[RMDB]
RNA sequence: GGGAACGACUCGAGUAGAGUCGAAAAGAGAAGUAAAACACAGAAAGAAAAAAGGAAAUGAGCAUUAUCAUUGGAAAUUUGUGCCGCAACACAGCUGUGGGCUGUAGUCUGCAGAUGACGGCUUCCUUAUCUGCUGUUGCCAAGUCCAGGUUCCUGACUACGUCCUGGUAUUCGUACCAGGACGUAGAAAAGAAACAACAACAACAAC
Reactivity to 2A3 in 0.01 (KOAc 150mM, MgCl2 10mM, bicine 150mM(pH8.5), 24C), signal-to-noise 2, nucleotides 027 to 156: g070a010g040a100a050g040u140a050a040a130a070c060a010c010a010g080a000a110a010g070a090a150a040a030a000a060g040g020a010a130a060u070g020a050g030c080a050u070u130a020u110c050a020u030u050g010g130a120a070a140u070u100u130g060u050g040c010c020g010c010a040a060c050a010c010a060g040c010u050g010u130g030g070g000c050u030g020u090a090g010u000c030u070g020c040a010g020a030u050g040a050c070g000g000c000u060u120c000c020u070u070a120u120c000u030g040c030u000g130u110u010g040c010c020a040a000g030u090c030c030a010g100g000u050u030c020c000u020g020a010
Reactivity to DMS in 0.01 (KOAc 150mM, MgCl2 10mM, bicine 150mM(pH8.5), 24C), signal-to-noise 1, nucleotides 027 to 156: g000a130g030a110a050g010u010a040a070a040a090c050a110c020a080g000a010a100a100g040a000a030a150a120a020a160g000g000a020a080a050u000g000a060g040c110a090u010u010a100u010c020a090u010u010g000g000a070a070a100u000u010u010g020u000g010c000c020g040c060a030a020c070a090c010a060g000c030u030g010u010g010g020g030c010u000g020u010a100g010u010c040u000g060c020a070g000a020u000g020a040c080g000g010c020u000u010c070c040u010u010a110u010c030u000g020c000u000g030u010u000g000c000c070a070a100g010u020c090c080a150g010g010u000u000c000c000u000g010a300